[RMDB]
RNA sequence: GGGAACGACUCGAGUAGAGUCGAAAAAUAUGCAUACACUCAGCACACCCUGUCUGCAUUGUUGCUGAUUUCAAAAUUUGGACGAAAAUCACCCAAUCCUCUAGACUUGGUGGCUUGGGAAGAUCGAACCUUUGAAUAGUUUCGACUAUUCAAAGGUAAAAGAAACAACAACAACAAC
Reactivity to DMS in 0.01 (KOAc 150mM, MgCl2 10mM, bicine 150mM(pH8.5), 24C), signal-to-noise 6, nucleotides 027 to 126: a090u000a060u000g010c040a050u010a070c100a120c100u000c050a050g000c040a070c060a090c040c020c030u000g010u000c060u010g000c070a080u000u010g000u000u010g020c030u000g000a080u000u000u000c060a060a060a100a140u010u000u010g010g020a140c060g010a040a070a090a080u010c040a070c010c020c010a020a030u000c020c040u000c020u000a090g010a110c200u010u010g000g020u000g000g000c130u000u000g020g000g000a060a040g000a060u000c050g010a150
Reactivity to 2A3 in 0.01 (KOAc 150mM, MgCl2 10mM, bicine 150mM(pH8.5), 24C), signal-to-noise 2, nucleotides 027 to 126: a000u150a030u090g040c050a020u080a160c080a050c100u050c010a030g000c020a020c000a020c020c000c020u030g080u070c030u100g050c020a080u010u100g100u110u080g010c040u010g070a210u020u140u150c100a110a090a100a130u120u110u190g070g010a040c010g070a050a020a060a060u030c010a020c010c000c000a000a010u010c020c000u010c020u080a160g050a300c080u140u080g050g000u020g080g000c020u000u010g000g000g000a020a030g020a010u040c030g010a010